[RMDB]
RNA sequence: GGGAACGACUCGAGUAGAGUCGAAAAUCACAAUUCACAACUUUAGUUAUCGAGGCUAUUGCAGUACACAAUUGCUUGGAGCCUCUGAAAUCAGUGAUUUCGGAUUAAGCAAUUACCAAUUAUUUAGAGCUUUCUAUUAUUUCGAUAAUAGAAAGCUAAAAGAAACAACAACAACAAC
Reactivity to 2A3 in 0.01 (KOAc 150mM, MgCl2 10mM, bicine 150mM(pH8.5), 24C), signal-to-noise 3, nucleotides 027 to 126: u010c010a050c030a080a050u090u020c010a010c000a110a160c050u250u250u240a050g030u060u070a100u180c020g000a010g010g000c000u030a030u030u100g020c040a030g060u120a060c200a020c040a200a110u070u000g010c000u050u020g230g110a050g030c020c000u000c010u000g010a000a000a010u070c030a050g020u000g070a000u030u010u080c080g010g010a010u030u030a040a030g050c010a050a070u070u060a060c010c010a000a110u230u100a120u100u200u160a210g030
Reactivity to DMS in 0.01 (KOAc 150mM, MgCl2 10mM, bicine 150mM(pH8.5), 24C), signal-to-noise 3, nucleotides 027 to 126: u000c020a060c070a060a070u000u000c070a030c080a080a100c160u000u010u010a100g010u000u010a100u000c090g000a050g010g000c000u000a070u010u000g000c020a010g000u010a120c190a120c240a090a020u000u000g000c010u020u000g010g010a080g010c060c070u000c000u020g010a000a020a030u010c140a130g020u000g010a030u000u000u000c120g010g010a050u010u000a060a100g000c140a060a070u000u010a140c100c020a070a100u030u010a090u000u000u000a130g020